[RMDB]
RNA sequence: GGGAACGACUCGAGUAGAGUCGAAAACAGAGAGGGGGGGACGAUGCGGAACUGGAAGAGCUCAUGGCUGGGGUACGGCUGUCGUACCUGAUCAGAAGGUUCGAGGACGGGUGGGACGAGGAGAACGCCUGAGAACAAUAUUCGUAUUGUUCUCAGGAAAAGAAACAACAACAACAAC
Reactivity to DMS in 0.01 (KOAc 150mM, MgCl2 10mM, bicine 150mM(pH8.5), 24C), signal-to-noise 1, nucleotides 027 to 126: c060a150g020a070g050a190g070g000g000g010g070g050g060a080c080g020a090u000g010c150g000g050a060a060c100u020g000g000a160a120g000a040g000c040u010c070a110u010g000g010c040u000g000g020g000g000u000a010c040g010g040c220u030g000u020c020g010u000a000c010c000u000g000a110u020c100a080g000a270a110g000g000u000u010c010g010a080g000g000a100c070g000g000g070u020g030g000g000a100c070g000a060g010g000a060g000a070a120c210g000
Reactivity to 2A3 in 0.01 (KOAc 150mM, MgCl2 10mM, bicine 150mM(pH8.5), 24C), signal-to-noise 1, nucleotides 027 to 126: c050a020g170a020g020a040g030g030g020g000g000g000g000a000c010g030a030u130g090c040g050g010a050a040c040u040g040g060a100a030g010a040g030c030u080c250a100u160g080g030c030u010g030g040g000g040u010a020c010g000g040c140u130g170u300c000g000u000a000c000c000u020g020a070u100c010a000g010a100a010g020g030u050u000c030g030a040g010g050a030c050g000g000g040u250g030g020g000a030c010g040a030g080g020a120g010a050a010c030g040